An RNA of 177 nucleotides, treated with 2A3 and read out base by base. The reactions ran in a buffer of 150 mM KOAc, 10 mM MgCl2 and 150 mM bicine (pH 8.5), at 24 C. Source: RMDB library OK1LIB, as collected in RNAgym. 2A3 adducts were read by reverse transcription with SuperScript II with manganese. As a SHAPE reagent, 2A3 marks flexible, mostly unpaired nucleotides at the ribose 2'-OH.
RNA sequence: GGGAACGACUCGAGUAGAGUCGAAAACAUUUUAGCAACAUGCAAAAUCUUCUGCCCUAAAGUGGAGCUAUGUUGCGGUGGACCUGGAGGGAUGCUGGCAGAAAGGAAAUACACAUGCACUGGAAAACGCAGGAGUCCUAUUCGUAGGACUCCUGCGAAAAGAAACAACAACAACAAC
Reactivity to 2A3 in 0.01 (KOAc 150mM, MgCl2 10mM, bicine 150mM(pH8.5), 24C), signal-to-noise 1, nucleotides 027 to 126: c110a250u090u000u170u170a030g020c020a000a260c040a080u040g000c000a080a110a110a160u060c140u160u120c220u220g070c010c000c000u120a040a080a150g040u040g000g000a010g000c010u110a000u120g060u070u150g040c000g000g000u100g000g000a000c000c000u000g000g000a170g010g010g000a000u110g000c070u000g100g000c100a000g020a110a000a000g220g010a000a000a000u170a030c030a000c000a040u030g070c030a000c180u090g000g130a000a000a000a120